Source: RMDB library M2RFPK, as collected in RNAgym. Chemical mapping of a 207-nucleotide RNA with 2A3 and DMS. High 2A3 reactivity points to a flexible backbone, as in loops and unpaired stretches. The reactions ran in a buffer of 150 mM KOAc, 10 mM MgCl2 and 150 mM bicine (pH 8.5), at 24 C. Reactivities are given for positions 27 through 156. DMS adducts were read by reverse transcription with MarathonRT. The 2A3 profile rests on 1,475 reads.
RNA sequence: GGGAACGACUCGAGUAGAGUCGAAAACAGAACUGGAUGGGCCGUGUGCUUAACCAGGACAAGAUCUCUUUCUCUCCAACGUUGUUGCCAACUCAUGAUUCUCCUAACCUGUGCUUGGAGAGACGUGCUACCAUAUAGGUGUUCGCACCUAUAUGAACCUAUAUGUAGACUUCGGUCUACAUAUAGGAAAAGAAACAACAACAACAAC
Reactivity to 2A3 in 0.01 (KOAc 150mM, MgCl2 10mM, bicine 150mM(pH8.5), 24C), signal-to-noise 2, nucleotides 027 to 156: c040a010g040a030a060c010u000g000g010a060u000g060g030g020c030c090g280u210g140u260g070c000u030u000a030a050c000c010a010g020g050a010c050a070a060g050a160u020c060u010c000u090u150u000c020u010c010u010c070c060a080a060c070g000u000u020g010u030u020g060c090c020a060a040c070u040c060a030u050g040a240u050u030c010u040c030c020u070a030a070c000c040u200g070u230g140c070u050u040g000g010a000g000a020g010a010c000g040u050g010c060u090a140c060c000a000u000a000u000a000g000g000u010g020u020u040c180g000c080a020c000c020u000a000u000a000u000g000a010a010
Reactivity to DMS in 0.01 (KOAc 150mM, MgCl2 10mM, bicine 150mM(pH8.5), 24C), signal-to-noise 2, nucleotides 027 to 156: c050a110g030a070a140c020u000g000g020a160u010g000g000g030c000c070g060u000g040u000g030c030u000u000a080a130c020c010a040g020g010a180c070a130a140g010a070u010c030u020c030u000u000u000c020u010c010u020c040c040a060a140c120g000u000u010g030u000u010g000c000c010a080a160c030u000c010a060u000g000a140u000u000c010u010c030c010u000a060a030c080c040u010g010u000g030c040u020u000g000g010a050g010a030g000a050c060g040u000g010c040u000a170c110c010a030u000a010u000a010g000g020u000g020u000u010c280g070c020a000c000c000u010a020u000a010u000g010a060a110